RNA sequence: GGGAACGACUCGAGUAGAGUCGAAAAGUUAACAGUUUAGUCAUUCUAUCACUAAAUGUUCCACUUGUUGAGAUAAGGGAGAUUUCAGAGUCGUGUAAGUCAUUUAGGUGUAAUUUACUUUUACUAAUGACGUAAAUGAUUUCGAUCAUUUACGUCAAAAAGAAACAACAACAACAAC
Reactivity to DMS in 0.01 (KOAc 150mM, MgCl2 10mM, bicine 150mM(pH8.5), 24C), signal-to-noise 5, nucleotides 027 to 126: g020u030u030a070a090c090a080g010u000u000u010a040g010u000c180a100u010u030c100u020a080u030c200a070c040u000a000a010a040u010g000u000u010c040c010a080c130u000u000g010u010u000g020a080g010a070u010a050a090g010g000g020a060g000a090u000u000u030c040a110g000a050g020u000c020g000u000g000u010a030a040g000u010c030a020u000u000u020a060g000g010u000g010u020a050a050u020u000u020a040c060u010u010u000u010a080c200u030a060a200
Reactivity to 2A3 in 0.01 (KOAc 150mM, MgCl2 10mM, bicine 150mM(pH8.5), 24C), signal-to-noise 5, nucleotides 027 to 126: g080u070u070a060a000c040a100g040u010u020u040a050g040u060c050a070u150u080c070u170a120u150c010a020c020u030a050a000a000u020g030u080u050c090c010a050c030u050u130g090u160u160g060a050g010a060u080a070a100g110g070g010a070g020a130u060u070u010c030a050g010a030g070u040c060g010u030g030u110a070a100g070u070c040a010u060u070u070a070g060g000u020g010u080a040a090u020u090u060a110c070u040u060u060u030a060c020u050a080a050